[RMDB]
The data come from the RNA Mapping Database (RMDB), library OK1LIB. This 177-nucleotide RNA was probed chemically with DMS and 2A3. The RNA was probed in 150 mM KOAc, 10 mM MgCl2 and 150 mM bicine (pH 8.5) at 24 C. The DMS profile rests on 7,442 reads. The 2A3 profile rests on 2,637 reads.

RNA sequence: GGGAACGACUCGAGUAGAGUCGAAAAGCUCUAGGAGACUAGAGCGAUACGUUAGAGAGCUCGUGGCAUGACUAACGGAUAGCGAGGUACGAGGUUGCCAGAGGACAUAGCUAUAGCUAUGUCCAAAGUCCUAUCAUACGUUCGCGUAUGAUAGGACAAAAGAAACAACAACAACAAC
Reactivity to DMS in 0.01 (KOAc 150mM, MgCl2 10mM, bicine 150mM(pH8.5), 24C), signal-to-noise 4, nucleotides 027 to 126: g000c010u000c000u000a000g000g010a240g000a170c010u000a000g000a020g000c000g010a050u030a030c090g010u000u010a010g000a210g020a010g030c040u000c080g020u040g010g000c060a080u020g000a170c050u000a020a050c060g000g010a080u000a090g030c060g000a070g010g010u010a030c050g000a050g000g030u000u000g000c030c040a130g000a260g000g000a000c000a000u000a010g010c000u000a100u010a080g010c000u000a000u000g000u000c000c000a000a020a030
Reactivity to 2A3 in 0.01 (KOAc 150mM, MgCl2 10mM, bicine 150mM(pH8.5), 24C), signal-to-noise 3, nucleotides 027 to 126: g000c000u000c000u000a000g000g030a080g010a050c000u000a000g000a000g020c010g000a000u010a010c000g000u060u110a030g020a020g000a000g020c000u030c040g090u090g030g010c020a020u100g020a070c010u010a050a000c010g040g010a060u050a020g060c010g000a040g000g050u040a020c010g030a020g150g050u060u070g050c040c000a050g020a060g050g000a000c010a000u010a000g000c010u180a050u070a300g000c020u010a000u020g000u020c000c010a000a000a000